[RMDB]
Conditions: 150 mM KOAc, 10 mM MgCl2 and 150 mM bicine (pH 8.5), 24 C. This 177-nucleotide RNA was probed chemically with 2A3 and DMS. It was measured as part of the RMDB library OK1LIB.
RNA sequence: GGGAACGACUCGAGUAGAGUCGAAAAUGCUGGUUAGGGAUUGUAGAGAUGCAGUCCCCAGUGUCGCAAAUUAGACGGGCUUCUCUUGUAUAUGGUUACGUGCGACAGAUACUGGUGAGGCGAAGAAGGGUUAAUAUAACUUCGGUUAUAUUAACCCAAAAGAAACAACAACAACAAC
Reactivity to 2A3 in 0.01 (KOAc 150mM, MgCl2 10mM, bicine 150mM(pH8.5), 24C), signal-to-noise 4, nucleotides 027 to 126: u150g000c020u020g000g120u130u200a140g030g000g000a000u000u010g010u010a060g010a020g020a120u050g030c000a000g010u000c000c000c000c000a020g000u000g040u050c000g010c120a050a090a100u200u090a120g040a050c040g010g070g000c000u030u000c040u030c010u050u060g090u030a110u010a030u200g080g000u080u060a050c080g060u050g050c050g020a030c000a030g050a030u070a010c000u000g030g000u050g050a030g030g000c040g060a040a030g050a120a170
Reactivity to DMS in 0.01 (KOAc 150mM, MgCl2 10mM, bicine 150mM(pH8.5), 24C), signal-to-noise 5, nucleotides 027 to 126: u030g020c020u000g010g020u020u040a130g030g010g010a020u010u010g020u010a020g000a260g000a210u000g000c000a030g000u000c000c020c000c020a020g020u010g020u010c040g010c050a090a100a110u040u020a110g000a060c080g000g000g010c080u000u010c040u000c020u010u010g000u000a050u030a040u050g010g020u010u010a080c120g020u000g000c030g000a020c020a020g000a080u010a040c030u000g000g000u010g000a120g010g000c030g000a060a120g000a140a110